An RNA of 177 nucleotides, treated with 2A3 and DMS and read out base by base. Values cover nucleotides 27 to 126. Conditions: 150 mM KOAc, 10 mM MgCl2 and 150 mM bicine (pH 8.5), 24 C. The data come from the RNA Mapping Database (RMDB), library M2PK90.
RNA sequence: GGGAACGACUCGAGUAGAGUCGAAAAUUAAAAUGAUCGCAGCUGAAAUGGCGGUCGCUAUGGUCUCCCUGACGGGAGGGACUCCAGUCCAAAGAGUCGACUAUCCCACCAUAAGUUUGCCAAAAAACAUUGUAAUGAUCUUCGGAUCAUUACAAUGAAAAGAAACAACAACAACAAC
Reactivity to 2A3 in 0.01 (KOAc 150mM, MgCl2 10mM, bicine 150mM(pH8.5), 24C), signal-to-noise 4, nucleotides 027 to 126: u050u020a030a030a000a080u100g010a010u020c000g000c020a040g020c070u110g080a060a040a090u100g040g000c000g000g020u000c000g000c020u040a060u070g020g030u000c000u000c000c030c000u060g180a060c120g000g000g000a010g010g030g000a000c010u000c030c010a050g200u040c040c010a080a090a030g010a000g010u010c010g000a050c040u110a150u050c040c000c000a020c010c010a080u070a140a060g050u090u160u150g120c050c030a090a130a000a010a010a040
Reactivity to DMS in 0.01 (KOAc 150mM, MgCl2 10mM, bicine 150mM(pH8.5), 24C), signal-to-noise 5, nucleotides 027 to 126: u020u010a060a050a120a090u010g000a010u000c000g010c010a040g020c030u000g010a090a160a140u040g000g000c010g010g000u000c000g010c170u000a040u000g010g010u000c010u000c000c010c010u010g030a150c270g000g010g000a020g010g010g010a000c010u000c010c060a120g000u000c140c200a080a120a140g000a030g000u000c010g010a140c150u000a100u000c000c000c000a110c120c080a050u000a050a080g000u000u020u010g020c090c100a000a060a050a070a070a110